RNA sequence: GGGAACGACUCGAGUAGAGUCGAAAAGGUAACGUUCUGAGCUUCAGACGCACCAUCAUUCCAUAUUGUGACAUUCCAAUCACGAAUGUCGCCAACAUUGGAAGUCUGAUUAUCAACAGUCUUGUUUAUACCGGAGGAUAUUCGUAUCCUCCGGUAUAAAAGAAACAACAACAACAAC
Reactivity to 2A3 in 0.01 (KOAc 150mM, MgCl2 10mM, bicine 150mM(pH8.5), 24C), signal-to-noise 6, nucleotides 027 to 126: g040g020u090a160a010c030g100u170u030c080u080g180a180g250c100u160u060c010a000g000a000c020g030c040a090c030c030a060u180c050a090u020u000c010c000a020u020a030u060u050g020u030g000a000c000a010u000u000c060c060a110a260u160c040a090c190g000a000a000u000g000u020c000g000c010c030a110a090c070a090u040u080g000g020a050a030g070u000c060u060g070a130u080u170a110u180c040a000a110c000a080g050u020c010u100u190g090u060u000u000
Reactivity to DMS in 0.01 (KOAc 150mM, MgCl2 10mM, bicine 150mM(pH8.5), 24C), signal-to-noise 2, nucleotides 027 to 126: g060g010u050a070a220c100g000u020u000c000u000g000a070g010c300u010u000c030a040g020a020c000g110c300a120c030c010a120u010c160a150u000u040c000c000a000u000a110u000u000g000u000g000a000c000a000u000u000c000c130a170a110u070c300a110c300g010a010a000u000g000u000c000g000c090c120a050a010c100a010u000u010g030g000a000a060g020u010c080u000g040a060u040u030a080u100c220a000a020c110a030g030u000c100u010u010g050u010u000u040

Source information:
Source: RMDB library OK1LIB, as collected in RNAgym. An RNA of 177 nucleotides, treated with 2A3 and DMS and read out base by base. DMS adducts were read by reverse transcription with MarathonRT. Reactivities are rounded to 0.1 and cut off at 0 and 3. In probing experiments dimethyl sulfate is read out at A N1 and C N3, which are open when not base-paired.